Structure probing data (2A3 and DMS) for a 170-nucleotide construct.
For 2A3 the reverse transcriptase was SuperScript II with manganese.
The 2A3 profile rests on 44,988 reads.
Conditions: 150 mM KOAc, 10 mM MgCl2 and 150 mM bicine (pH 8.5), 24 C.
DMS adducts were read by reverse transcription with MarathonRT.
[RMDB]
RNA sequence: GGGAACGACUCGAGUAGAGUCGAAAAUUGUAAUGCGCCCUAACUACACAAUUAAGGGUUCCUUUCUGUGUGGUUCUUGUGGUAGUGUUGGUUACACCAAGGAGGGUAGUGUGAUCAAUUUCUGUUAACGCAUUCGAGUUCGCUCGAAUGAAAAGAAACAACAACAACAAC
Reactivity to 2A3 in 0.01 (KOAc 150mM, MgCl2 10mM, bicine 150mM(pH8.5), 24C), signal-to-noise 9, nucleotides 027 to 129: u060u040g040u070a040a040u070g030c010g010c020c010c000u010a010a000c000u030a000c010a000c000a040a300u140u090a040a030g100g150g000u260u300c010c000u020u040u020c030u010g000u000g000u000g010g010u050u050c050u100u130g040u110g040g010u030a040g020u040g070u090u060g040g020u030u030a010c030a040c020c030a070a060g100g030a080g020g050g010u110a210g020u060g010u000g010a030u090c010a010a020u050u090u030c020u010g080u070u090a070a020c050g000
Reactivity to DMS in 0.01 (KOAc 150mM, MgCl2 10mM, bicine 150mM(pH8.5), 24C), signal-to-noise 7, nucleotides 027 to 129: u010u010g030u030a090a020u020g010c050g000c030c000c020u000a080a040c030u000a020c010a000c030a030a080u000u010a030a000g000g040g030u040u070c040c020u020u020u020c040u040g000u000g030u000g040g000u010u020c090u000u000g000u030g000g000u020a000g000u000g030u010u030g010g010u040u030a000c040a070c020c060a060a080g020g030a080g000g040g000u020a070g060u010g010u000g010a080u020c020a020a030u000u000u000c020u000g030u000u000a060a080c160g010